[RMDB]
RNA sequence: GGGAACGACUCGAGUAGAGUCGAAAAGGGUUUGAGCCAUCGCCCGAAUAGGAUGGUUGAUACAAGUCGUCAUUGUACGCGACGUAGUACGUACUCAUUAGUGCGAAAGCACGGUUAGUCCGACUGGGCAGGGACGAUCUUCUGUCAAUACUUAGAAAAUCGUAUCGUAUUUCGAUACGAUACGAUUAAAAGAAACAACAACAACAAC
Reactivity to DMS in 0.01 (KOAc 150mM, MgCl2 10mM, bicine 150mM(pH8.5), 24C), signal-to-noise 4, nucleotides 027 to 156: g000g030g020u000u000u000g010a120g040c010c030a080u000c050g000c000c010c020g020a150a090u000a080g000g000a050u000g010g040u000u000g000a070u000a040c050a050a070g010u000c020g020u000c020a160u000u010g010u000a060c050g010c020g000a110c080g000u000a170g030u010a060c020g010u000a020c030u010c100a140u000u000a080g030u010g010c010g010a130a090a200g020c030a020c010g000g040u010u000a080g010u000c030c020g010a200c100u000g010g020g020c000a100g010g020g000a050c020g000a050u000c040u000u000c060u000g030u000c030a050a120u000a120c060u000u000a140g000a090a110
Reactivity to 2A3 in 0.01 (KOAc 150mM, MgCl2 10mM, bicine 150mM(pH8.5), 24C), signal-to-noise 5, nucleotides 027 to 156: g040g000g000u060u110u190g070a020g000c010c000a010u010c020g030c000c020c030g010a050a110u130a090g070g040a010u020g030g010u030u060g030a060u040a140c070a090a060g020u020c020g020u000c040a110u090u180g080u160a120c080g010c020g060a010c030g020u010a020g020u050a100c000g000u010a010c000u010c000a030u050u050a080g010u000g000c020g040a110a030a000g020c010a000c000g020g020u020u020a010g010u000c030c010g020a010c020u020g020g000g010c010a010g020g000g010a030c040g050a090u010c010u080u020c030u030g020u000c000a020a070u080a190c060u100u110a080g130a080a140